RNA sequence: GGGAACGACUCGAGUAGAGUCGAAAAUGGCGGGGGCGAAACAGGAUCGACAAGGGUGUAAAGAUCGCUCUUUUACUCGGCAUGAUACCACCGUUAUCGGGUCAACAGAGUAGGUGCAAAUGACAACAAAAGAAUCGCGCGUUCGCGCGCGAUUCAACAAGUGUUGAACGUUCGCGUUCAACACUUGAAAAGAAACAACAACAACAAC
Reactivity to 2A3 in 0.01 (KOAc 150mM, MgCl2 10mM, bicine 150mM(pH8.5), 24C), signal-to-noise 2, nucleotides 027 to 156: u100g030g010c040g000g000g010g010g030c020g000a010a010a030c060a030g030g040a050u070c020g080a050c070a080a050g050g040g010u050g020u080a050a120a030g070a060u110c070g050c020u060c050u020u140u020u040a060c090u040c020g000g000c040a010u090g030a010u050a060c010c010a000c010c040g050u030u020a020u080c020g010g000g010u050c040a000a010c060a070g090a030g040u070a030g010g000u040g000c010a010a080a130u180g020a080c040a060a010c030a010a230a040a000g000a000a000u000c000g000c000g000c000g010u040u020c270g020c020g000c000g000c000g100a000u000u000c000a000a010
Reactivity to DMS in 0.01 (KOAc 150mM, MgCl2 10mM, bicine 150mM(pH8.5), 24C), signal-to-noise 1, nucleotides 027 to 156: u010g000g050c030g050g060g060g020g020c060g000a080a010a030c060a130g030g000a100u000c000g000a020c110a020a140g000g030g000u000g000u000a070a060a120g000a150u000c060g000c080u010c030u010u000u000u000a110c020u000c030g000g000c010a100u010g020a060u000a070c040c090a160c020c040g000u010u010a040u000c060g000g000g020u000c030a060a120c080a170g010a150g020u020a050g000g030u010g010c020a060a080a040u000g000a120c030a060a120c020a070a010a090a110g040a000a000u010c000g010c000g020c010g080u000u010c300g020c050g030c000g020c000g020a000u000u000c020a030a130
Structure probing data (2A3 and DMS) for a 207-nucleotide construct. The reactions ran in a buffer of 150 mM KOAc, 10 mM MgCl2 and 150 mM bicine (pH 8.5), at 24 C. DMS adducts were read by reverse transcription with MarathonRT. The 2A3 profile rests on 1,305 reads. The data come from the RNA Mapping Database (RMDB), library M2RFPK.